[RMDB]
RNA sequence: GGGAACGACUCGAGUAGAGUCGAAAACGCCGAGCCCGUCGAGCGCGCCGACGCCGCCCGCAACCGCGCGCUGCUGCUCGACGCGGCCCAGCAGCUCGUGCGCGAGCACGGUGUCGACAGCCUGACACGUACUGAGUGAGUUCGCUCACUCAGUACGAAAAGAAACAACAACAACAAC
Reactivity to DMS in 0.01 (KOAc 150mM, MgCl2 10mM, bicine 150mM(pH8.5), 24C), signal-to-noise 3, nucleotides 027 to 126: c140g020c010c010g020a070g000c010c030c020g030u010c020g000a020g010c010g020c040g020c080c030g000a110c030g030c030c080g000c070c020c160g000c120a090a170c270c130g000c030g010c050g020c040u010g000c030u000g010c030u000c040g000a040c020g000c120g020g000c020c000c040a040g010c030a110g000c040u020c040g010u000g000c030g000c150g000a210g020c020a030c030g000g000u010g000u000c020g010a070c100a090g000c040c020u010g000a050c060a200
Reactivity to 2A3 in 0.01 (KOAc 150mM, MgCl2 10mM, bicine 150mM(pH8.5), 24C), signal-to-noise 2, nucleotides 027 to 126: c090g020c020c020g020a010g000c000c000c010g030u010c010g020a020g010c070g000c010g000c050c040g080a130c010g000c040c010g040c040c090c070g070c030a100a080c040c030g000c010g010c050g000c050u010g020c030u050g000c000u010c020g020a040c010g040c140g030g010c000c000c000a000g020c010a010g000c010u030c040g030u030g020c060g000c020g050a000g010c020a000c030g050g000u080g010u030c030g010a060c020a030g060c000c000u040g030a010c050a010